Conditions: 150 mM KOAc, 10 mM MgCl2 and 150 mM bicine (pH 8.5), 24 C. The record gives the reactivity of an RNA of 207 nucleotides to 2A3 and DMS. Source: RMDB library OK3TST, as collected in RNAgym. Reactivities are given for positions 27 through 156. The 2A3 profile rests on 2,812 reads. Reactivities are rounded to 0.1 and cut off at 0 and 3.
[RMDB]
RNA sequence: GGGAACGACUCGAGUAGAGUCGAAAACCCCGUGUGGAACACACGACUAAGCUUCGGCUUAGUAAGAGCAACUUACUAUGGUAGGCUCCCCGGCGUGUCUCGAACCAUGCCGGGCCAAACCCAUAGGGCUGGCGGUCCCUGUGCGGUCAUUAUAGAAACCUGCAUUUACUUUCGAGUAAAUGCAGGUAAAAGAAACAACAACAACAAC
Reactivity to 2A3 in 0.01 (KOAc 150mM, MgCl2 10mM, bicine 150mM(pH8.5), 24C), signal-to-noise 3, nucleotides 027 to 156: c000c000c000c000g000u040g010u020g030g200a200a040c040a000c000a000c110g010a000c000u010a010a000g000c000u020u180c260g060g000c000u000u000a010g000u010a030a070g010a000g000c020a030a030c010u040u080a040c010u100a040u120g020g040u040a060g040g030c000u010c000c020c000c000g000g000c000g020u000g010u010c070u090c210g050a030a010c030c000a000u010g000c000c000g010g000g000c000c000a020a010a000c000c000c000a000u000a000g020g010g000c040u100g080g090c060g040g030u100c000c000c000u020g000u020g000c130g000g030u030c030a060u050u260a070u010a070g070a060a150
Reactivity to DMS in 0.01 (KOAc 150mM, MgCl2 10mM, bicine 150mM(pH8.5), 24C), signal-to-noise 1, nucleotides 027 to 156: c000c000c010c010g000u010g020u010g000g000a170a140c000a060c060a080c030g040a080c020u020a010a020g040c010u000u010c280g030g000c020u020u000a010g000u010a080a060g010a190g010c040a180a060c010u020u010a130c030u000a070u000g040g050u010a080g030g020c040u000c070c040c020c000g040g080c020g040u000g020u000c200u020c250g030a200a230c250c010a090u000g000c040c020g000g010g000c040c030a040a130a100c120c040c000a070u000a100g030g010g020c020u010g010g000c030g010g050u000c010c080c030u020g000u000g020c050g030g000u000c040a050u000u010a060u000a170g000a190a180